[RMDB]
RNA sequence: GGGAACGACUCGAGUAGAGUCGAAAAGACUCACAGUUCCACGUGGCUGGGGAGGCCUUACAAUCAUGGCAGAAGAUGAAAGGCAUGUCUUACAUGGUGGCAGGCAAGAGAGAAUGGGAACCAAGUGAAGGGGGUUUCCCUUUAUAAAACCAUCAGAUAUUACCAAAGGGUUCGCCCUUUGGUAAUAAAAAGAAACAACAACAACAAC
Reactivity to 2A3 in 0.01 (KOAc 150mM, MgCl2 10mM, bicine 150mM(pH8.5), 24C), signal-to-noise 2, nucleotides 027 to 156: g000a000c000u010c010a040c010a030g020u030u010c000c000a000c040g070u080g010g000c030u060g050g040g040g000a020g020g030c000c020u000u050a050c060a070a120u070c020a050u070g020g000c040a000g010a110a000g030a020u060g090a060a040a040g060g030c020a030u070g000u010c050u090u060a050c030a060u100g080g000u000g060g000c030a020g070g000c000a040a000g040a020g040a010g050a160a060u070g000g000g040a000a000c070c070a060a000g000u070g120a110a080g020g000g010g000g050u020u030u000c010c000c020u000u170u010a050u020a020a090a010a020c040c000a000u080c010a010g040a150
Reactivity to DMS in 0.01 (KOAc 150mM, MgCl2 10mM, bicine 150mM(pH8.5), 24C), signal-to-noise 2, nucleotides 027 to 156: g000a050c010u020c000a100c030a170g020u000u000c020c020a090c080g030u000g010g000c040u010g040g020g000g000a070g020g000c020c050u010u000a090c100a110a120u000c040a150u000g040g020c050a160g000a080a120g030a040u000g010a090a090a040g020g020c010a100u000g020u000c080u000u000a070c030a040u000g030g040u000g020g000c040a040g010g040c020a060a110g000a160g010a160g000a070a050u000g020g010g020a080a090c030c030a020a090g020u000g010a070a080g010g030g000g060g020u000u000u000c000c010c020u000u010u020a070u000a070a050a080a050c010c040a070u000c080a090g030a270